[RMDB]
An RNA of 177 nucleotides, treated with DMS and 2A3 and read out base by base. Source: RMDB library TTRDEL, as collected in RNAgym.
RNA sequence: GGGAACGACUCGAGUAGAGUCGAAAAGAUAUGGACCUUCACGUUUGGACAACAGCUCGGAAACGAGACAUGUCCAAACGUGAGAGGUCCUAAGUCUAAAACGGACAGUACUUCGGUACUGUCCGAACAGCAUCACAUUCUUCGGAAUGUGAUGCUGAAAAGAAACAACAACAACAAC
Reactivity to DMS in 0.01 (KOAc 150mM, MgCl2 10mM, bicine 150mM(pH8.5), 24C), signal-to-noise 2, nucleotides 027 to 126: g000a010u000a300u000g000g000a000c000c000u000u000c000a010c000g000u010u000u000g000g000a010c010a050a060c250a160g020c000u000c000g000g000a080a090a190c010g000a000g000a030c080a140u000g000u000c000c000a000a000a030c010g020u000g000a040g000a000g000g020u000c000c000u010a000a070g000u000c020u010a020a080a070a180c010g000g000a000c010a010g020u000a010c000u000u040c170g020g000u000a000c000u000g020u000c000c010g000a040a060
Reactivity to 2A3 in 0.01 (KOAc 150mM, MgCl2 10mM, bicine 150mM(pH8.5), 24C), signal-to-noise 1, nucleotides 027 to 126: g010a010u070a060u190g010g020a000c010c010u000u000c020a010c000g010u000u000u000g000g000a010c020a130a000c070a140g060c000u000c000g070g010a110a080a060c050g010a000g030a050c030a020u070g000u000c000c010a010a000a000c000g000u010g000a010g000a010g010g010u000c020c000u000a000a000g010u000c040u070a050a090a050a060c020g030g000a000c000a000g000u010a000c010u010u160c300g120g010u000a000c000u000g000u000c000c000g000a000a000
The RNA was probed in 150 mM KOAc, 10 mM MgCl2 and 150 mM bicine (pH 8.5) at 24 C.